[RMDB]
RNA sequence: GGGAACGACUCGAGUAGAGUCGAAAACCUCGCCCGGAACCUCUUGACCAGCGCAGGUGCUGACGCGACCGGUGGCAUCACCGAGUUGCUCCCGAGAACCGCUUUUUCUCUAUCUUACUUGCCUCCGGGCGAGGGUGUUUAGCCCUUGGAACCGCAGCGCUAUAUAACUCUUCGGAGUUAUAUAGCGAAAAGAAACAACAACAACAAC
Reactivity to 2A3 in 0.01 (KOAc 150mM, MgCl2 10mM, bicine 150mM(pH8.5), 24C), signal-to-noise 1, nucleotides 027 to 156: c010c000u000c000g030c010c000c010g070g000a070a060c030c060u030c040u240u260g130a090c100c000a080g050c030g010c130a090g010g010u040g060c130u030g070a050c080g020c010g040a010c010c010g010g000u040g080g060c100a180u300c000a080c010c010g000a100g140u020u000g030c000u080c070c010c030g030a040g000a000a070c060c040g080c260u100u260u060u130u000c010u040c020u000a100u130c080u110u060a040c000u020u050g010c000c020u050c000c000g000g020g010c030g010a020g000g000g000u020g010u060u150u060a040g000c000c040c000u010u040g120g020a120a040c030c080g060c150a080g000